[RMDB]
RNA sequence: GGGAACGACUCGAGUAGAGUCGAAAAGAUAUGGAAUGGUUACAUAGCAACAGCUUUGUUCGGAAACGAACAAAGACAUGCUAGUAACAUUCCUAAGUCAAAACCAACGACGUUCGCGUCGUUGGAAGGUAAAACUACGGUUCGCCGUAGUUUUACCAAAAGAAACAACAACAACAAC
Reactivity to 2A3 in 0.01 (KOAc 150mM, MgCl2 10mM, bicine 150mM(pH8.5), 24C), signal-to-noise 2, nucleotides 027 to 126: g020a000u070a010u130g010g040a030a020u080g300g140u080u010a050c060a150u140a200g020c070a110a120c070a180g000c020u060u000u010g020u000u000c000g010g020a030a020a060c000g000a000a000c010a000a000a000g030a000c010a100u300g020c020u000a040g000u000a000a010c000a000u000u000c000c010u000a060a020g040u020c020a030a020a090a130c000c000a000a000c020g020a010c010g000u050u140c300g040c010g170u030c000g010u020u000g000g000a010a050
Reactivity to DMS in 0.01 (KOAc 150mM, MgCl2 10mM, bicine 150mM(pH8.5), 24C), signal-to-noise 2, nucleotides 027 to 126: g010a030u000a300u020g000g010a020a000u020g010g010u010u000a000c010a240u010a040g010c000a090a100c230a200g000c000u000u000u000g010u000u000c010g020g010a120a050a110c000g030a020a020c000a000a010a000g010a020c130a170u000g010c000u020a040g000u000a000a000c000a020u000u000c000c000u000a030a100g000u000c030a070a070a110a240c010c000a030a010c000g000a000c010g040u000u020c300g030c020g020u000c000g010u000u010g010g000a030a020